[RMDB]
The record gives the reactivity of an RNA of 177 nucleotides to DMS and 2A3.
Reactivities are given for positions 27 through 126.
For 2A3, 2,090 sequencing reads were counted.
2A3 is a SHAPE reagent: it acylates the 2'-hydroxyl of flexible nucleotides of all four kinds.
RNA sequence: GGGAACGACUCGAGUAGAGUCGAAAACAGGCUUCCUGAGUAGAGGAGUGGACAAAAAGGAACCAGGUCAGACCUGGAAAGCAAGAGUUAAUUAGAUGGGACUGAUAUGCUGAAAGCCCUAGUUUAGUGUAUAGCAGAUGUUCGCAUCUGCUAUACAAAAAGAAACAACAACAACAAC
Reactivity to DMS in 0.01 (KOAc 150mM, MgCl2 10mM, bicine 150mM(pH8.5), 24C), signal-to-noise 6, nucleotides 027 to 126: c080a110g000g010c070u000u000c020c010u010g010a090g020u000a080g010a070g010g010a070g020u000g010g010a100c080a020a050a080a100a060g010g010a110a150c030c020a020g000g010u000c170a100g010a300c030c000u000g010g000a060a090a070g000c060a070a070g000a100g010u010u000a040a100u000u010a060g010a100u000g010g000g010a040c050u010g000a130u010a090u010g000c050u000g010a050a070a070g000c020c010c020u000a110g010u010u010u000a080g020
Reactivity to 2A3 in 0.01 (KOAc 150mM, MgCl2 10mM, bicine 150mM(pH8.5), 24C), signal-to-noise 2, nucleotides 027 to 126: c020a010g060g010c020u070u020c020c020u020g040a070g030u070a010g010a070g080g010a020g040u060g060g050a020c020a000a100a050a040a010g080g000a040a040c020c010a000g000g010u050c060a020g060a090c000c010u020g000g070a030a000a000g000c020a060a040g000a010g080u050u100a040a090u140u060a030g070a160u110g040g010g010a000c010u030g020a030u050a070u210g020c020u040g020a080a040a000g010c000c040c000u010a060g050u000u130u080a090g030